[RMDB]
RNA sequence: GGGAACGACUCGAGUAGAGUCGAAAAGAAGUACUGUUCGCAGUACUUCAAACGGCUACGGCAAGGCCAAGCCGAAGCCGAACGGCAAGCCGAAGGCCAAAAAAACCGUUCCCUUCGGGGAACGGAACCUUACGUUAACGUUCGCGUUAACGUAAGGAAAAGAAACAACAACAACAAC
Reactivity to 2A3 in 0.01 (KOAc 150mM, MgCl2 10mM, bicine 150mM(pH8.5), 24C), signal-to-noise 3, nucleotides 027 to 126: g000a010a000g000u010a010c010u010g030u070u120c270g000c110a000g010u000a000c000u000u000c000a000a000a020c010g010g010c010u040a010c010g020g000c020a060a130g060g010c020c000a010a010g000c000c000g010a010a000g010c000c010g010a060a030c050g080g010c060a060a020g070c020c020g100a140a120g020g000c000c000a050a030a000a000a010a010a080c000c010g010u000u000c000c000c000u000u020c220g050g000g000g020a000a010c000g000g000a000a010
Reactivity to DMS in 0.01 (KOAc 150mM, MgCl2 10mM, bicine 150mM(pH8.5), 24C), signal-to-noise 2, nucleotides 027 to 126: g000a010a010g000u000a010c000u000g000u000u020c260g030c020a000g040u000a000c000u010u000c000a040a090a200c040g010g000c010u000a120c020g010g020c020a020a050g000g020c060c030a300a090g030c000c000g030a080a040g010c010c000g000a080a090c120g030g010c050a060a090g020c050c040g030a060a100g030g010c020c040a000a000a060a060a090a100a100c000c000g010u000u000c000c000c000u000u020c180g030g020g000g000a020a000c010g000g000a000a020
Structure probing data (2A3 and DMS) for a 177-nucleotide construct. The 2A3 profile rests on 6,778 reads. The DMS profile rests on 2,040 reads. The RNA was probed in 150 mM KOAc, 10 mM MgCl2 and 150 mM bicine (pH 8.5) at 24 C. DMS adducts were read by reverse transcription with MarathonRT.